[RMDB]
RNA sequence: GGGAACGACUCGAGUAGAGUCGAAAACACGAAAGUUGGCUAAUCCUGGUCGGACAUCAGGUGGUUAGUGCAAUGGCAUAAGCCAACUUGGCGCUAAUAGAUACUAAUCGUAGCAUAGCUGAAUAAAAGCCCAUAUGAUGUUCGCAUCAUAUGGGCUAAAAGAAACAACAACAACAAC
Reactivity to 2A3 in 0.01 (KOAc 150mM, MgCl2 10mM, bicine 150mM(pH8.5), 24C), signal-to-noise 2, nucleotides 027 to 126: c030a040c040g080a060a000a100g010u020u010g010g020c050u050a010a060u030c000c000u000g020g010u040c140g170g000a040c000a100u000c000a020g000g000u000g010g050u080u130a120g000u050g010c020a150a170u150g100g000c000a010u060a020a040g000c000c000a000a030c000u010u010g030g000c010g010c020u030a040a070u080a230g080a030u100a120c020u060a050a000u150c060g000u010a030g000c060a140u080a030g050c040u070g050a180a000u170a160a040a070
Reactivity to DMS in 0.01 (KOAc 150mM, MgCl2 10mM, bicine 150mM(pH8.5), 24C), signal-to-noise 3, nucleotides 027 to 126: c060a200c110g020a060a030a050g000u000u000g000g010c000u000a080a080u030c000c000u010g060g000u020c070g050g000a290c140a050u000c030a000g000g000u000g010g030u020u010a100g000u000g000c040a160a130u070g000g000c020a080u010a180a040g010c010c010a000a050c010u010u000g000g000c030g010c010u000a010a060u030a070g010a080u010a040c180u030a030a080u050c020g000u020a030g000c030a100u030a040g010c030u040g010a090a070u000a040a120a080